Chemical mapping of a 177-nucleotide RNA with DMS and 2A3.
RNA sequence: GGGAACGACUCGAGUAGAGUCGAAAAAGCGUGAUGCAUACGUGCAUCACGCAACAGGCCGGCGUGGGGUGGUGGACUCAGGCUUCUGGAGCUGAAGCCUGAUGUUCCCCAUCCCGCAGCGGCCUAACUUUAACAGUUAGUUCGCUAACUGUUAAAGAAAAGAAACAACAACAACAAC
Reactivity to DMS in 0.01 (KOAc 150mM, MgCl2 10mM, bicine 150mM(pH8.5), 24C), signal-to-noise 5, nucleotides 027 to 126: a080g010c000g020u000g000a000u000g010c000a040u010a090c210g020u000g000c010a000u000c000a010c000g010c000a010a030c120a030g010g010c010c000g020g020c070g040u000g000g010g010g030u000g000g000u010g010g000a010c010u000c000a010g000g010c000u000u000c010u000g010g020a160g030c180u010g000a010a000g010c000c000u000g000a010u020g000u000u000c000c020c000c000a000u000c000c000c000g020c000a020g010c000g000g000c000c000u000a010a020
Reactivity to 2A3 in 0.01 (KOAc 150mM, MgCl2 10mM, bicine 150mM(pH8.5), 24C), signal-to-noise 9, nucleotides 027 to 126: a000g000c000g010u000g000a000u010g000c010a010u020a060c240g070u020g000c000a000u010c000a000c000g000c000a000a000c020a000g000g000c000c020g080g300c020g030u020g000g000g000g010u000g000g030u150g020g000a000c000u000c000a040g000g010c000u000u000c020u070g270g100a170g080c130u060g030a000a000g000c000c000u000g000a010u050g010u040u030c000c000c000c000a000u000c000c000c000g000c000a000g000c000g000g000c000c000u000a000a010
The reactions ran in a buffer of 150 mM KOAc, 10 mM MgCl2 and 150 mM bicine (pH 8.5), at 24 C.
It was measured as part of the RMDB libraries RFM100 and RFMREP.